RNA sequence: GGGAACGACUCGAGUAGAGUCGAAAAAGCGCUUAAUAUGUACAUGGGUAUUCCCCCAUAUCUGUGUACUAUAGCUGAGAGGACUUGCUUGAUAGGGGGAGGAGUGCAAGUUUGUUUGGUGCGCGAAGUGUAUAUUUUAUUUCGAUAAAAUAUACACAAAAGAAACAACAACAACAAC
Reactivity to DMS in 0.01 (KOAc 150mM, MgCl2 10mM, bicine 150mM(pH8.5), 24C), signal-to-noise 5, nucleotides 027 to 126: a110g010c000g010c030u010u020a060a070u010a050u030g010u000a000c010a010u000g010g000g010u000a000u020u010c030c020c010c010c080a300u000a000u000c000u000g000u000g000u000a000c010u010a040u010a050g010c020u010g000a090g010a100g000g000a020c020u000u000g000c010u010u010g020a140u020a110g010g010g000g010g000a040g000g000a130g010u000g000c020a010a010g000u000u000u030g000u010u010u010g010g010u000g000c040g000c030g010a080a120
Reactivity to 2A3 in 0.01 (KOAc 150mM, MgCl2 10mM, bicine 150mM(pH8.5), 24C), signal-to-noise 8, nucleotides 027 to 126: a000g060c050g010c030u080u080a060a020u070a090u230g000u000a000c000a010u010g010g000g000u000a010u080u160c000c000c000c000c000a000u010a000u010c000u000g000u000g000u010a000c020u050a030u070a010g030c050u050g040a020g020a030g120g030a030c010u030u040g030c020u080u090g080a080u220a150g040g010g050g000g000a020g020g050a070g020u060g000c000a020a020g000u010u030u030g060u020u070u070g050g010u050g000c020g000c020g040a110a030